Conditions: 150 mM KOAc, 10 mM MgCl2 and 150 mM bicine (pH 8.5), 24 C.
Structure probing data (DMS and 2A3) for a 177-nucleotide construct.
Source: RMDB libraries RFM100 and RFMREP, as collected in RNAgym.
2A3 adducts were read by reverse transcription with SuperScript II with manganese.
For DMS the reverse transcriptase was MarathonRT.
[RMDB]
RNA sequence: GGGAACGACUCGAGUAGAGUCGAAAAUGACCUCCCGGGAGCGGGGGACCACCAGGUUGCCUAAGGAGGGGUGAACCGGCCCAGGUCGGAAACGGAGCAGGUCAAAACUCCCGUGCUGAUCAGUAGUUGUGUAAUAGUUAUUCGUAACUAUUACACAAAAAGAAACAACAACAACAAC
Reactivity to DMS in 0.01 (KOAc 150mM, MgCl2 10mM, bicine 150mM(pH8.5), 24C), signal-to-noise 6, nucleotides 027 to 126: u010g000a070c030c010u000c010c010c030g000g000g010a140g020c100g010g010g010g000g000a060c040c040a200c120c100a100g030g030u000u010g000c030c020u010a110a110g010g010a120g020g010g000g020u000g010a030a050c030c020g010g000c060c020c070a100g000g010u000c040g010g000a030a140a080c050g000g000a070g030c110a030g000g000u010c080a030a040a100a130c100u000c010c010c010g020u020g000c050u000g000a060u000c050a090g010u010a090g020u000
Reactivity to 2A3 in 0.01 (KOAc 150mM, MgCl2 10mM, bicine 150mM(pH8.5), 24C), signal-to-noise 9, nucleotides 027 to 126: u070g020a020c000c010u010c000c000c000g010g050g010a100g100c060g020g010g010g020g030a060c030c010a020c020c020a030g020g000u020u030g040c000c010u120a180a090g150g040a060g020g090g010g010u060g080a020a020c010c000g020g000c020c010c010a060g020g060u050c020g030g040a080a040a020c010g010g000a090g020c110a020g040g030u050c000a000a010a030a100c040u020c000c000c010g010u060g010c030u050g020a150u080c040a080g110u160a050g040u080